[RMDB]
RNA sequence: GGGAACGACUCGAGUAGAGUCGAAAAUGAGUGUGAAUGCGAGUAGUAUUCUCUAUCUGUAAGUUCUGUGUGGAGCGGUCAGCCAAGAGGGCAGCACAACUACAAGACACUGACAGUCAGAUGCUGCGUCCACGUCCUUAUUCGUAAGGACGUGGACAAAAGAAACAACAACAACAAC
Reactivity to 2A3 in 0.01 (KOAc 150mM, MgCl2 10mM, bicine 150mM(pH8.5), 24C), signal-to-noise 2, nucleotides 027 to 126: u170g010a000g050u110g010u060g120a150a040u090g010c080g000a040g090u140a000g010u000a220u070u030c020u000c010u010a110u010c030u010g050u080a110a040g020u110u020c030u030g140u050g010u070g040g020a080g020c130g010g030u090c000a020g050c040c010a040a050g110a070g110g040g020c000a000g000c000a000c000a050a040c000u020a040c040a130a000g060a020c050a010c070u120g100a050c020a060g060u050c020a010g020a090u040g000c040u030g030c030
Reactivity to DMS in 0.01 (KOAc 150mM, MgCl2 10mM, bicine 150mM(pH8.5), 24C), signal-to-noise 2, nucleotides 027 to 126: u040g010a090g000u020g030u000g000a060a080u000g030c130g010a140g010u020a150g010u000a030u000u000c020u000c030u000a050u010c010u020g010u010a100a110g020u000u000c040u000g000u000g000u000g010g010a120g010c080g020g000u020c020a020g020c100c070a080a050g010a110g020g020g000c020a060g000c040a030c130a100a080c060u000a010c070a130a090g000a080c040a020c050u000g050a050c050a040g010u000c100a040g010a130u030g010c030u000g000c040
The data come from the RNA Mapping Database (RMDB), library OK2TST. The record gives the reactivity of an RNA of 177 nucleotides to 2A3 and DMS. For 2A3, 1,216 sequencing reads were counted. The RNA was probed in 150 mM KOAc, 10 mM MgCl2 and 150 mM bicine (pH 8.5) at 24 C.